[RMDB]
RNA sequence: GGGAACGACUCGAGUAGAGUCGAAAAAUUGAUGAACUGAGAGUUGCUUCCAGUCCUGAGCGCACCAUCUGGAAUUCCAGUCUGAGGUUACAAUUAGAACUCCUGACCCCAGAUUCAACUUUGCAAAACUACUUGAAAGGUUCGCCUUUCAAGUAGUAAAAGAAACAACAACAACAAC
Reactivity to DMS in 0.01 (KOAc 150mM, MgCl2 10mM, bicine 150mM(pH8.5), 24C), signal-to-noise 6, nucleotides 027 to 126: a080u010u010g000a070u010g000a140a040c050u000g000a130g010a060g010u020u000g010c050u010u000c010c010a050g010u010c040c040u000g010a080g020c080g030c040a050c050c020a050u020c020u010g010g020a130a080u010u020c080c020a080g000u010c030u010g010a070g010g010u000u010a070c100a080a070u020u030a100g000a070a120c090u000c040c020u000g000a110c020c010c010c000a060g000a090u020u010c120a060a070c080u010u000u020g010c090a050a070a090
Reactivity to 2A3 in 0.01 (KOAc 150mM, MgCl2 10mM, bicine 150mM(pH8.5), 24C), signal-to-noise 8, nucleotides 027 to 126: a010u100u120g010a040u060g030a050a040c050u050g020a030g010a010g220u060u070g020c040u040u000c010c000a010g040u040c010c020u050g030a030g010c040g000c030a020c010c010a030u050c010u010g030g040a070a100u140u030c020c010a010g030u000c030u040g040a030g030g030u040u060a040c030a040a040u120u070a090g060a120a030c020u020c020c020u020g070a060c000c000c000c010a010g000a040u060u060c020a040a070c040u070u090u120g030c020a010a030a060
Conditions: 150 mM KOAc, 10 mM MgCl2 and 150 mM bicine (pH 8.5), 24 C. This 177-nucleotide RNA was probed chemically with DMS and 2A3. The data come from the RNA Mapping Database (RMDB), libraries RFM100 and RFMREP. Values are in units of 0.01, from 0 to 300, in steps of 10. 2A3 adducts were read by reverse transcription with SuperScript II with manganese.